[RMDB]
RNA sequence: GGGAACGACUCGAGUAGAGUCGAAAAGUAGGGUGCUCCUGGCAAUCGUGGUUUUCCAGGCUCUGAUGGUUUACCUGGGCCAAAGGUGAGGUUGCCCUGUCAAUGUUGAUACUUACGUGGGGGGUGCUCCAGAAGAUGCCAUUUUUCAGCACGGUGAAUGGGUAGAAAAUUUCGAUUUUCUACCCAUAAAAGAAACAACAACAACAAC
Reactivity to DMS in 0.01 (KOAc 150mM, MgCl2 10mM, bicine 150mM(pH8.5), 24C), signal-to-noise 2, nucleotides 027 to 156: g010u000a070g000g020g030u010g010c000u000c020c030u000g000g020c020a050a060u010c040g010u010g020g020u000u010u030u000c010c030a110g020g020c020u000c040u040g010a120u010g030g030u010u000u000a040c000c020u000g010g000g020c040c020a040a090a130g010g040u000g050a060g030g010u010u000g000c000c010c100u000g010u010c050a080a140u010g020u020u030g000a110u000a080c080u010u000a070c070g020u010g010g020g010g000g010g020u000g000c020u000c010c030a110g020a070a110g000a110u010g000c030c030a160u010u000u000u010u020c060a050g010c010a060c010g000g020u000g000a110
Reactivity to 2A3 in 0.01 (KOAc 150mM, MgCl2 10mM, bicine 150mM(pH8.5), 24C), signal-to-noise 2, nucleotides 027 to 156: g130u120a000g000g020g010u000g010c010u010c010c050u040g000g040c010a030a040u080c060g020u090g080g030u000u160u110u110c030c030a040g020g000c050u050c030u140g140a160u150g060g050u050u070u080a050c010c010u000g020g060g010c010c020a140a020a000g080g010u060g000a070g030g000u030u060g010c000c040c000u000g030u040c020a080a030u130g020u030u010g050a040u030a220c010u080u010a040c060g020u020g000g000g000g030g000g000u000g000c000u060c050c020a040g020a080a020g080a050u070g000c000c000a010u090u010u030u100u140c030a010g020c030a010c000g000g000u000g020a080
The record gives the reactivity of an RNA of 207 nucleotides to DMS and 2A3. For 2A3 the reverse transcriptase was SuperScript II with manganese. High DMS reactivity at an A or C suggests that its Watson-Crick edge is free. The 2A3 profile rests on 786 reads. It was measured as part of the RMDB library OK3TST. DMS adducts were read by reverse transcription with MarathonRT. The DMS profile rests on 7,231 reads.